[RMDB]
RNA sequence: GGGAACGACUCGAGUAGAGUCGAAAAUGACCUGGAGCGGACAGCGGUCGGAGUUGUUGAGUCAGCUGAAGAUUCACGCGGCGACAACGACGUGGACGCCGAUCUUUUCGUAAGUGUCCUUGGCUCGCGUGAAUUGCCCUUUCGAGGGCAAUUCACGAAAAGAAACAACAACAACAAC
Reactivity to DMS in 0.01 (KOAc 150mM, MgCl2 10mM, bicine 150mM(pH8.5), 24C), signal-to-noise 1, nucleotides 027 to 126: u010g000a100c000c020u000g000g010a020g000c000g010g000a060c010a050g030c050g000g000u020c110g000g000a130g000u020u000g000u000u050g000a190g020u010c080a050g040c050u000g000a170a140g000a150u050u000c020a040c090g010c030g040g000c080g010a160c100a010a040c050g000a030c090g000u000g010g000a010c070g020c000c080g000a000u010c040u000u000u070u030c070g030u020a060a080g010u000g000u000c000c010u050u010g000g000c010u000c080g000
Reactivity to 2A3 in 0.01 (KOAc 150mM, MgCl2 10mM, bicine 150mM(pH8.5), 24C), signal-to-noise 2, nucleotides 027 to 126: u100g000a000c000c000u000g010g010a030g000c040g020g000a010c000a030g010c000g000g080u020c020g020g060a180g040u000u210g000u000u000g010a020g090u030c010a070g090c090u070g000a230a130g190a300u140u000c000a000c100g000c010g020g020c040g000a200c040a050a010c030g060a000c040g090u220g000g040a010c010g060c000c000g000a010u100c020u060u140u090u060c090g030u040a170a150g050u030g000u070c000c000u010u030g020g000c000u000c090g030